[RMDB]
RNA sequence: GGGAACGACUCGAGUAGAGUCGAAAAGUCGUCCCGGCGUUCCGCGCUAUCGAGCGGAUCUACAGCGUGACCAUCCACGCCACACACACCGGGAUCAAAGUGUCCUCGGCCACGAAUCACCGCGUGACCUUCUAUCAGUCUGGCGACCCGGCCAUCGGCCUAUAUUAAGGUUCGCCUUAAUAUAGGCAAAAGAAACAACAACAACAAC
Reactivity to DMS in 0.01 (KOAc 150mM, MgCl2 10mM, bicine 150mM(pH8.5), 24C), signal-to-noise 2, nucleotides 027 to 156: g020u020c090g000u010c000c010c010g000g040c050g030u010u010c010c010g020c010g000c030u030a160u000c130g020a090g000c000g040g000a010u010c050u000a130c160a060g000c010g040u000g000a130c050c300a190u010c020c030a070c000g020c020c000a080c070a100c150a130c020a050c010c010g000g060g030a060u010c000a070a070a110g020u000g010u000c040c040u000c090g020g000c020c010a060c000g000a120a120u000c110a110c090c050g030c030g030u020g000a030c000c020u020u000c090u000a080u000c050a040g000u000c040u020g000g020c010g010a120c010c030c010g010g000c020c030a090u000c030g010
Reactivity to 2A3 in 0.01 (KOAc 150mM, MgCl2 10mM, bicine 150mM(pH8.5), 24C), signal-to-noise 5, nucleotides 027 to 156: g080u070c040g010u010c000c000c000g000g000c020g010u030u000c010c000g000c000g000c090u150a140u300c100g060a020g010c010g000g010a020u010c050u080a040c030a060g000c020g010u020g040a110c060c050a050u100c090c000a010c000g000c020c010a050c000a010c000a000c000a010c050c000g020g000g000a010u060c050a050a060a010g130u090g040u080c000c030u020c030g010g010c050c010a060c040g070a050a070u130c040a040c100c010g010c020g020u070g020a060c010c010u070u030c040u040a160u110c020a070g130u080c060u070g050g000c020g040a080c010c000c030g060g000c100c020a060u150c060g090
An RNA of 207 nucleotides, treated with DMS and 2A3 and read out base by base.
Reactivities are given for positions 27 through 156.
For DMS the reverse transcriptase was MarathonRT.
For 2A3 the reverse transcriptase was SuperScript II with manganese.
For 2A3, 4,420 sequencing reads were counted.
It was measured as part of the RMDB library OK3TST.